An RNA of 177 nucleotides, treated with DMS and 2A3 and read out base by base. The 2A3 profile rests on 11,003 reads. Reactivities are given for positions 27 through 126. For DMS, 18,339 sequencing reads were counted. DMS adducts were read by reverse transcription with MarathonRT.
RNA sequence: GGGAACGACUCGAGUAGAGUCGAAAACGUGAUUAUCUAGAACCCAAGGGUAUCGCGAUGUUGACCAUCGACCUGCCAUCUGUGGGGGCCUCAUCCCGCUGGAAGCUCACGCAAGAUACCAGUUAUAAUUUAGCUAAAAUUUCGAUUUUAGCUAAAUAAAAGAAACAACAACAACAAC
Reactivity to DMS in 0.01 (KOAc 150mM, MgCl2 10mM, bicine 150mM(pH8.5), 24C), signal-to-noise 9, nucleotides 027 to 126: c070g020u000g010a070u010u000a060u000c050u000a130g010a130a160c030c020c020a100a130g010g000g020u000a020u000c050g020c040g010a070u000g010u000u010g010a130c180c020a040u000c050g010a110c070c040u000g000c040c050a090u000c070u000g020u000g010g010g000g000g010c040c060u000c080a090u000c020c020c030g010c050u000g000g000a060a130g010c110u000c040a040c070g010c060a070a080g000a070u000a090c050c020a130g010u000u010a100u010a110
Reactivity to 2A3 in 0.01 (KOAc 150mM, MgCl2 10mM, bicine 150mM(pH8.5), 24C), signal-to-noise 5, nucleotides 027 to 126: c020g030u050g050a090u060u250a050u110c070u050a060g060a150a100c010c020c020a040a070g090g000g000u030a030u090c030g000c010g050a030u030g050u110u130g120a080c050c020a020u020c010g050a110c020c020u020g020c010c020a100u040c070u060g080u080g010g000g010g020g010c010c010u030c020a080u040c000c010c020g020c020u010g020g040a060a030g010c010u020c020a030c030g030c030a040a010g010a050u060a060c000c010a010g010u040u040a110u030a150